[RMDB]
Record summary:
The record gives the reactivity of an RNA of 177 nucleotides to 2A3. For 2A3, 395 sequencing reads were counted.

RNA sequence: GGGAACGACUCGAGUAGAGUCGAAAACUACACAUGUCAUUUACGACAGCGAUAACAGAACGAAAGCCAAACUUGCCAAACUUCUUCGUCUUCAAUCCCUGGACGAACUGCCGGUAGGGACGGAAUGGGCCUGAGGGACUUUCGAGUCCCUCAGGCCAAAAGAAACAACAACAACAAC
Reactivity to 2A3 in 0.01 (KOAc 150mM, MgCl2 10mM, bicine 150mM(pH8.5), 24C), signal-to-noise 1, nucleotides 027 to 126: c000u070a000c010a010c000a160u060g000u040c090a110u300u300u090a080c070g020a000c010a070g010c070g090a080u050a080a110c030a010g060a000a000c000g110a190a000a000g030c000c000a030a070a060c030u020u140g000c010c000a110a230a210c060u000u000c000u120u060c070g000u000c000u070u060c030a090a020u070c000c000c000u020g000g000a060c040g060a060a060c000u060g000c000c030g060g020u000a000g050g110g000a000c020g110g000a020a230u070g000
The RNA was probed in 150 mM KOAc, 10 mM MgCl2 and 150 mM bicine (pH 8.5) at 24 C. For 2A3 the reverse transcriptase was SuperScript II with manganese.